The data come from the RNA Mapping Database (RMDB), library M2PK50. The record gives the reactivity of an RNA of 177 nucleotides to 2A3 and DMS. The 2A3 profile rests on 4,601 reads. The RNA was probed in 150 mM KOAc, 10 mM MgCl2 and 150 mM bicine (pH 8.5) at 24 C. 2A3 is a SHAPE reagent: it acylates the 2'-hydroxyl of flexible nucleotides of all four kinds.
[RMDB]
RNA sequence: GGGAACGACUCGAGUAGAGUCGAAAAGAACCGCGAUUCGUCGCGGUUCGAGCGCCGUAGCGCGCAACGGCGUAACGGCAGCAUUAGCGCGCAGCUGGCGACGAUCGGGUGGUUUCGACCACCCGAACGUCGUGCACCCUUUCGAGGGUGCACGACGAAAAGAAACAACAACAACAAC
Reactivity to 2A3 in 0.01 (KOAc 150mM, MgCl2 10mM, bicine 150mM(pH8.5), 24C), signal-to-noise 3, nucleotides 027 to 126: g010a000a000c000c000g000c010g020a010u020u090c160g000u010c000g120c000g000g000u000u000c000g000a000g020c010g000c000c010g080u100a060g000c010g000c010g010c030a050a030c040g040g010c030g030u080a130a110c080g160g010c050a040g020c010a080u010u110a040g000c000g000c000g010c010a010g050c050u140g030g000c000g010a100c040g040a030u060c010g000g000g000u010g000g020u050u070u110c200g070a020c010c000a000c000c000c010g000a010a000
Reactivity to DMS in 0.01 (KOAc 150mM, MgCl2 10mM, bicine 150mM(pH8.5), 24C), signal-to-noise 5, nucleotides 027 to 126: g000a010a010c000c000g030c000g010a030u000u010c210g020u000c010g020c020g000g000u010u000c000g000a100g000c010g030c000c010g020u000a110g000c000g020c010g020c000a040a070c300g000g000c000g010u000a120a090c200g000g010c070a120g010c070a050u000u000a240g010c030g010c010g010c020a240g010c090u010g020g010c010g010a050c060g010a070u000c010g000g000g000u000g000g000u000u000u010c170g000a020c010c000a000c000c000c000g010a000a020